An RNA of 207 nucleotides, treated with 2A3 and DMS and read out base by base. For 2A3 the reverse transcriptase was SuperScript II with manganese. The data come from the RNA Mapping Database (RMDB), library M2RFPK. The 2A3 profile rests on 3,076 reads.
[RMDB]
RNA sequence: GGGAACGACUCGAGUAGAGUCGAAAAGAAUCACCGUACCUAUUUAGGUUUACGCUCCAAGAUCGGUGGAUAGCAGCCCUAUCAAUAUCUAGGAGAACUGUGCUAUGUUUAGAAGAUUGGGUAGUCUAUUACACAGCCAUGUUCGCAUGGCUGUGAAGUUAGAUCUGAGUUUCGACUCAGAUCUAACAAAAGAAACAACAACAACAAC
Reactivity to 2A3 in 0.01 (KOAc 150mM, MgCl2 10mM, bicine 150mM(pH8.5), 24C), signal-to-noise 4, nucleotides 027 to 156: g070a030a050u140c010a010c000c010g000u020a020c010c000u100a170u270u260u300a040g000g010u030u030u050a030c030g000c010u000c000c010a030a000g020a040u030c020g020g000u030g040g040a040u060a030g110c080a010g020c020c000c010u060a070u110c060a090a060u060a020u110c010u000a010g000g030a050g020a060a070c080u070g020u050g070c010u020a020u040g020u020u030u020a120g020a250a040g010a040u000u050g000g000g000u020a060g010u020c000u040a030u020u050a030c000a000c000a010g000c010c010a000u000g000u020u030c090g000c110a000u000g000g020c000u000g000u000g000a010a010
Reactivity to DMS in 0.01 (KOAc 150mM, MgCl2 10mM, bicine 150mM(pH8.5), 24C), signal-to-noise 2, nucleotides 027 to 156: g010a120a090u010c010a150c020c020g010u000a050c010c010u010a180u000u000u000a020g010g030u000u020u000a050c030g000c000u000c010c020a020a110g000a030u000c040g020g060u000g020g010a110u020a090g010c050a170g030c110c050c010u000a170u000c050a060a130u010a090u010c060u000a140g000g010a090g010a070a090c060u000g030u000g000c010u000a030u000g030u000u000u020a050g000a100a260g000a070u000u000g010g000g020u000a090g020u000c010u000a090u020u000a150c010a020c000a010g000c000c010a030u000g000u000u000c280g020c000a020u010g010g000c010u000g010u000g020a010a070